This 177-nucleotide RNA was probed chemically with 2A3. For 2A3, 7,512 sequencing reads were counted.
[RMDB]
RNA sequence: GGGAACGACUCGAGUAGAGUCGAAAAGAGCACGUUUGCAGUUUCUUUCUAGCUUUCUUUCGACCUUUCGGUGGUUUCUUAGGUCGUUUCUUUCCACCGUUGCUAGUUUCUGCUUUCGUGCUCGAGAGGGUGCUUUCGCGUUCGCGCGAGGGCACCCAAAAGAAACAACAACAACAAC
Reactivity to 2A3 in 0.01 (KOAc 150mM, MgCl2 10mM, bicine 150mM(pH8.5), 24C), signal-to-noise 4, nucleotides 027 to 126: g000a000g000c010a000c010g000u010u020u010g000c020a010g010u040u130u100c090u050u150u020c020u040a020g010c020u080u170u040c040u060u230u140c150g120a160c030c040u070u160u100c030g010g000u010g000g010u030u040u040c030u030u070a090g080g020u020c020g020u010u020u010c000u010u020u010c010c010a020c010c010g060u030u060g030c020u010a010g020u050u070u050c000u010g000c000u000u000u010c010g000u000g000c010u000c000g000a000g010a000